An RNA of 170 nucleotides, treated with 2A3 and DMS and read out base by base. The reactions ran in a buffer of 150 mM KOAc, 10 mM MgCl2 and 150 mM bicine (pH 8.5), at 24 C.
RNA sequence: GGGAACGACUCGAGUAGAGUCGAAAAUCCGCCCCCCGAGGGGGCCGAGUGAGGCUUAUCCCGGGGAUCGGCGUCGCCCCCACAUAGCAGACCCCGGGUCCCCUUCCGAACGAGGGGGACGGUCCUUGAACGAUAGAGUUCGCUCUAUCGAAAAGAAACAACAACAACAAC
Reactivity to 2A3 in 0.01 (KOAc 150mM, MgCl2 10mM, bicine 150mM(pH8.5), 24C), signal-to-noise 9, nucleotides 027 to 129: u020c000c000g010c000c000c000c000c000c000g020a120g000g010g000g020g000c010c010g020a060g120u300g100a120g040g060c050u120u150a100u200c010c010c010g000g000g000g010a190u050c030g030g010c020g070u130c120g160c000c000c000c010c000a040c030a080u190a020g030c020a010g020a030c000c000c000c000g010g000g000u000c010c000c000c000u030u040c040c060g080a120a070c050g010a120g010g000g000g000g000a000c000g010g000u020c010c010u060u110g040a110a030
Reactivity to DMS in 0.01 (KOAc 150mM, MgCl2 10mM, bicine 150mM(pH8.5), 24C), signal-to-noise 9, nucleotides 027 to 129: u050c010c010g000c000c000c010c020c000c020g040a110g020g010g020g020g000c030c000g000a040g040u070g010a130g030g010c060u030u050a100u050c000c000c020g000g000g010g010a130u010c020g000g000c010g010u060c170g030c060c020c010c020c030a120c170a110u050a160g020c040a040g000a010c000c000c050c000g020g010g000u000c000c000c000c000u000u000c030c070g000a100a210c130g020a080g030g020g000g000g030a020c030g000g020u040c000c000u010u030g030a110a170